[RMDB]
RNA sequence: GGGAACGACUCGAGUAGAGUCGAAAAGACAACAAAAUAGGGGCAGUUUUGUGUGUAUAAUGAGCACGCUGAAGUACAUGUGUGCAUAUAUACAUGUGUACAAUAUACAUAUGUGCAAUAUACAUAUUCACUAAUGGUAGUUCGCUACCAUUAGUGAAAAAGAAACAACAACAACAAC
Reactivity to DMS in 0.01 (KOAc 150mM, MgCl2 10mM, bicine 150mM(pH8.5), 24C), signal-to-noise 4, nucleotides 027 to 126: g000a080c040a090a030c040a030a060a070a100u010a140g020g010g000g020c180a060g010u000u000u000u010g020u010g050u000g000u000a010u000a050a090u000g030a240g010c010a020c040g020c150u000g000a100a120g010u000a030c020a020u010g030u010g010u010g030c190a050u010a100u020a120u000a050c020a000u000g050u000g000u000a000c030a060a070u010a300u010a080c060a070u010a030u000g030u010g020c020a120a050u010a030u000a030c010a000u000a130u010
Reactivity to 2A3 in 0.01 (KOAc 150mM, MgCl2 10mM, bicine 150mM(pH8.5), 24C), signal-to-noise 4, nucleotides 027 to 126: g020a020c020a040a000c010a010a090a040a060u160a120g000g010g020g000c040a050g030u020u020u110u070g060u040g020u010g010u000a020u020a070a240u130g100a020g020c000a000c020g020c050u070g030a160a010g010u010a010c010a010u040g010u000g000u030g070c120a020u050a000u020a000u020a140c010a010u000g010u000g000u020a000c030a080a020u200a030u050a110c050a030u190a060u220g000u010g020c000a030a010u030a000u010a020c020a010u050a120u030